[RMDB]
RNA sequence: GGGAACGACUCGAGUAGAGUCGAAAAGAUCAAAUAUGGGGGCCGUGCGUAUUCGUUUACGUUCUCUCAAAGCAGCAGUUUCAGAACGUCAUCGACAUGGUGUUGAAGAAAAUAUCCAAAUCAAAGAAUUUCUUAGUGGGUUCGCCCACUAAGAAAUAAAAGAAACAACAACAACAAC
Reactivity to DMS in 0.01 (KOAc 150mM, MgCl2 10mM, bicine 150mM(pH8.5), 24C), signal-to-noise 1, nucleotides 027 to 126: g020a070u010c010a120a110a100u000a070u000g010g000g010g070g010c220c040g040u000g020c090g010u010a100u000u000c030g000u000u000u000a040c040g000u000u000c010u000c110u000c150a030a120a080g030c090a040g010c020a040g000u010u010u000c180a130g020a060a080c020g010u010c070a030u000c050g010a040c120a020u010g010g010u010g010u020u000g030a120a140g000a090a040a030a070u000a050u010c030c010a020a130a080u000c060a070a050a230g020a130

Source: RMDB library OK2TST, as collected in RNAgym. Chemical mapping of a 177-nucleotide RNA with DMS. The RNA was probed in 150 mM KOAc, 10 mM MgCl2 and 150 mM bicine (pH 8.5) at 24 C.